Chemical mapping of a 177-nucleotide RNA with 2A3 and DMS.
The reactions ran in a buffer of 150 mM KOAc, 10 mM MgCl2 and 150 mM bicine (pH 8.5), at 24 C.
Reactivities are rounded to 0.1 and cut off at 0 and 3.
RNA sequence: GGGAACGACUCGAGUAGAGUCGAAAAGAUAUGGAUGAACGGUAUGGGAGCUCGUGGAUGAUGUCGUAAUCAUCGGAAACGAUGAUUACGACAUCAUCCGAGCGAGGAUCAUAUUUCAUCCUAAGUCGAUAAUAUUAACGUUCGCGUUAAUAUUAUCAAAAGAAACAACAACAACAAC
Reactivity to 2A3 in 0.01 (KOAc 150mM, MgCl2 10mM, bicine 150mM(pH8.5), 24C), signal-to-noise 2, nucleotides 027 to 126: g060a050u160a050u240g010g000a000u000g010a090a060c230g180g030u020a010u030g010g020g070a120g230c000u000c030g120u300g100g020a000u000g000a000u000g010u000c000g000u000a000a010u000c000a000u000c000g070g050a090a140a040c010g000a030u010g000a000u000u000a010c030g000a000c020a000u000c010a010u000c000c010g010a010g000c000g000a030g020g000a020u020c010a000u000a020u040u100u050c010a000u000c000c000u020a140a030g150u140c070
Reactivity to DMS in 0.01 (KOAc 150mM, MgCl2 10mM, bicine 150mM(pH8.5), 24C), signal-to-noise 6, nucleotides 027 to 126: g010a120u010a300u010g000g000a010u000g000a020a070c300g020g000u000a010u000g000g000g010a190g010c000u000c000g010u000g020g000a010u010g010a020u000g000u000c000g000u000a000a020u000c010a000u000c010g020g000a060a060a200c020g010a020u000g000a010u010u010a010c000g000a000c000a010u000c010a000u000c000c000g000a030g010c010g010a040g010g010a120u000c000a010u000a010u000u000u000c010a000u000c000c000u000a060a080g000u000c110